[RMDB]
RNA sequence: GGGAACGACUCGAGUAGAGUCGAAAAUUUACUUUGAAGGCCGAAGUGGAGAAGGGUUCCAUAACAAUGGAAUUCAUUUAUGGGUGAGUCGAUCCUAAGGUCUGGGUUAACUCUCUCUAAUAAGCUUUUGUGUAGAAUAUUUCGAUAUUCUACACAAAAAAGAAACAACAACAACAAC
Reactivity to DMS in 0.01 (KOAc 150mM, MgCl2 10mM, bicine 150mM(pH8.5), 24C), signal-to-noise 3, nucleotides 027 to 126: u010u010u000a060c070u000u020u000g010a080a090g010g000c060c010g010a080a040g030u010g000g000a070g010a130a090g020g000g000u010u000c000c000a010u010a140a170c280a140a050u000g010g000a030a020u000u000c020a070u000u020u010a060u010g010g000g010u010g000a070g020u000c010g000a050u000c000c000u000a080a130g010g010u010c160u000g020g000g010u000u000a050a050c020u000c030u000c000u000c020u000a080a070u010a080a140g000c080u000u000
Reactivity to 2A3 in 0.01 (KOAc 150mM, MgCl2 10mM, bicine 150mM(pH8.5), 24C), signal-to-noise 4, nucleotides 027 to 126: u030u010u030a030c000u060u020u110g120a150a040g040g000c030c010g010a040a050g030u040g050g100a090g040a110a130g030g000g010u010u000c000c000a010u070a040a090c130a150a010u040g010g020a020a010u010u000c010a030u000u100u100a120u160g040g000g000u050g010a020g040u030c010g020a010u010c000c000u040a070a040g170g050u040c060u040g010g020g000u000u010a010a010c000u010c000u000c010u000c000u020a060a070u060a140a100g050c020u000u000